The data come from the RNA Mapping Database (RMDB), library OK3TST. This 207-nucleotide RNA was probed chemically with 2A3 and DMS. The reactions ran in a buffer of 150 mM KOAc, 10 mM MgCl2 and 150 mM bicine (pH 8.5), at 24 C. DMS adducts were read by reverse transcription with MarathonRT.

RNA sequence: GGGAACGACUCGAGUAGAGUCGAAAAGGGCUUGACCCAUCGCCCGAAUAAGAUGGAUGAUACAAGUCGACAUUGUACGCGACGUAGAACGUACUCAUUGAAGUGCGAAAGCACGAAGUCCGACGUGUCUGGGACGAUCAUCAGGCAAGACUUAGAACAUACGUGACGUAUUCGUACGUCACGUAUGAAAAGAAACAACAACAACAAC
Reactivity to 2A3 in 0.01 (KOAc 150mM, MgCl2 10mM, bicine 150mM(pH8.5), 24C), signal-to-noise 5, nucleotides 027 to 156: g030g010g030c050u150u190g100a300c000c010c000a010u050c040g040c020c010c000g050a120a140u180a100a040g040a060u130g040g010a000u020g010a000u080a080c080a010a120g020u030c020g010a030c010a020u160u300g000u090a140c040g030c120g030a020c040g000u030a010g020a090a000c020g000u020a020c010u000c050a140u060u300g120a200a000g000u000g000c000g070a120a040a020g120c060a010c150g030a100a010g020u010c010c000g010a000c020g010u000g010u010c020u000g050g040g030a010c030g010a040u020c030a010u010c000a020g100g020c050a050a020g000a070c050u030u100a030g040a130a050
Reactivity to DMS in 0.01 (KOAc 150mM, MgCl2 10mM, bicine 150mM(pH8.5), 24C), signal-to-noise 3, nucleotides 027 to 156: g010g010g010c020u010u000g000a130c020c010c000a050u000c030g030c010c000c000g050a140a140u010a060a090g010a150u010g030g010a110u000g000a130u000a060c040a030a110g020u000c010g040a060c040a190u000u000g020u000a050c020g030c080g020a190c060g040u000a140g010a080a100c020g010u000a010c020u010c090a170u000u010g020a130a170g030u000g020c000g010a090a050a190g030c040a050c020g000a050a110g020u000c010c010g010a070c020g020u010g000u000c040u000g010g020g010a060c050g010a070u000c070a050u010c020a060g010g000c020a080a100g000a100c050u000u000a110g000a100a240